[RMDB]
RNA sequence: GGGAACGACUCGAGUAGAGUCGAAAAAGGAGAAGGUGAGGACGAGCAACCUUGCGGAGAACAUGUUUCGGCACAUGAGAAGCUUUCUGCGGAGGUAUCCUGGGUAUAUGAGUCGUGCCCAUGCGGAUGAAUUAGGUAAUUUCGAUUACCUAAUUCAAAAAGAAACAACAACAACAAC
Reactivity to 2A3 in 0.01 (KOAc 150mM, MgCl2 10mM, bicine 150mM(pH8.5), 24C), signal-to-noise 9, nucleotides 027 to 126: a000g110g020a070g010a090a020g050g030u080g030a040g030g010a030c040g020a030g040c030a030a050c010c020u030u080g050c030g030g040a050g010a050a020c020a070u080g050u020u090u100c060g070g020c050a030c020a080u110g040a050g030a180a020g030c010u020u090u040c030u060g030c030g040g020a020g010g030u040a040u050c010c020u030g030g010g040u090a110u010a060u270g010a000g010u010c000g000u010g010c000c010c020a010u130g050c070g070g030a110
Reactivity to DMS in 0.01 (KOAc 150mM, MgCl2 10mM, bicine 150mM(pH8.5), 24C), signal-to-noise 9, nucleotides 027 to 126: a060g010g010a080g010a080a060g010g010u010g010a090g000g010a080c100g010a090g010c110a110a090c060c030u000u000g010c050g010g000a050g010a060a100c120a030u000g010u000u000u000c070g010g010c110a130c080a050u000g010a100g010a080a120g010c090u000u000u000c040u000g010c040g010g000a040g010g010u000a080u000c040c020u000g010g010g010u000a070u000a080u010g010a020g000u000c010g010u000g000c000c000c000a090u010g010c120g010g000a240
Chemical mapping of a 177-nucleotide RNA with 2A3 and DMS.
For DMS the reverse transcriptase was MarathonRT.
For 2A3, 34,213 sequencing reads were counted.
It was measured as part of the RMDB library OK2TRN.
Reactivities are given for positions 27 through 126.
The RNA was probed in 150 mM KOAc, 10 mM MgCl2 and 150 mM bicine (pH 8.5) at 24 C.